[RMDB]
RNA sequence: GGGAACGACUCGAGUAGAGUCGAAAAGUCUCACUCUAAGUGGGCUACACUAGUUAAUCUCCGUCUGGGGUUAAAUAGAAGAGCUUAAUCAGACUAGCUGAAUGGAAGCCUGUUACUGGGCCGAUGUUUAUGCGAAAUGCUAAUACGGUGACUACGCGCAUUCUUUUAAGUUCGCUUAAAAGAAUGCAAAAGAAACAACAACAACAAC
Reactivity to DMS in 0.01 (KOAc 150mM, MgCl2 10mM, bicine 150mM(pH8.5), 24C), signal-to-noise 3, nucleotides 027 to 156: g000u000c000u010c020a050c040u000c080u000a050a060g030u010g000g010g020c000u010a030c020a110c030u000a010g000u000u000a010a030u000c010u000c070c120g010u010c050u000g010g000g020g000u010u000a000a030a020u000a020g000a120a070g000a090g010c110u010u000a070a110u000c020a040g010a030c010u000a180g020c020u000g000a030a040u000g020g010a170a020g010c010c000u010g030u000u010a120c180u010g030g010g020c020c000g010a300u020g000u000u000u000a020u020g000c010g010a100a070a150u000g020c090u020a060a100u000a050c020g030g030u000g000a130c050u000a090c080g020c150
Reactivity to 2A3 in 0.01 (KOAc 150mM, MgCl2 10mM, bicine 150mM(pH8.5), 24C), signal-to-noise 6, nucleotides 027 to 156: g060u030c040u040c090a030c010u100c040u120a200a070g010u020g010g010g000c010u080a020c040a020c020u010a010g010u000u010a010a010u010c020u000c050c060g020u000c020u030g010g010g000g000u010u020a010a020a020u030a040g100a190a020g030a050g060c080u170u240a030a030u080c000a010g000a010c010u010a010g000c010u010g020a020a010u030g000g040a030a000g000c000c000u030g030u030u030a020c030u030g010g000g000c000c010g010a010u030g020u020u010u020a150u250g000c000g010a020a020a040u220g080c140u210a000a020u010a020c000g000g010u000g020a010c020u030a030c110g070c020